Conditions: 150 mM KOAc, 10 mM MgCl2 and 150 mM bicine (pH 8.5), 24 C. This 177-nucleotide RNA was probed chemically with DMS and 2A3. DMS adducts were read by reverse transcription with MarathonRT. For 2A3 the reverse transcriptase was SuperScript II with manganese. For 2A3, 2,153 sequencing reads were counted. Reactivities are given for positions 27 through 126.
[RMDB]
RNA sequence: GGGAACGACUCGAGUAGAGUCGAAAAACACUACGAGGCAUACAGGUAUUUGAUCAAUUAAGUUGCUCCUCAACCGACCCAUUUGAAUAGUGUAGCCGACUCGUACCACAUCAAAUAAGGCUAUCAAGCGACAAGAACAAUUCGUUGUUCUUGUCGCAAAAGAAACAACAACAACAAC
Reactivity to DMS in 0.01 (KOAc 150mM, MgCl2 10mM, bicine 150mM(pH8.5), 24C), signal-to-noise 2, nucleotides 027 to 126: a040c090a080c100u030a120c040g040a010g010g020c090a070u000a040c110a010g020g040u010a000u020u030u000g000a030u000c280a050a030u020u050a040a110g020u010u010g020c220u010c010c020u020c030a120a100c060c040g000a080c030c040c000a170u010u000u000g010a050a090u010a060g010u000g020u010a030g010c030c010g000a020c060u000c080g000u040a150c050c070a060c200a090u000c110a020a040a100u020a040a070g040g000c010u010a020u020c120a030a080
Reactivity to 2A3 in 0.01 (KOAc 150mM, MgCl2 10mM, bicine 150mM(pH8.5), 24C), signal-to-noise 3, nucleotides 027 to 126: a010c040a000c020u030a040c050g040a040g010g000c020a000u090a110c040a090g200g010u050a180u010u120u120g080a020u100c070a050a060u110u060a090a090g020u050u050g000c010u030c000c000u080c030a050a040c030c020g090a080c000c000c030a040u030u090u120g140a120a090u080a060g040u040g000u000a000g000c000c000g060a030c030u040c050g000u020a030c010c010a020c050a090u160c050a080a000a060u170a070a000g010g000c010u020a060u140c060a040a030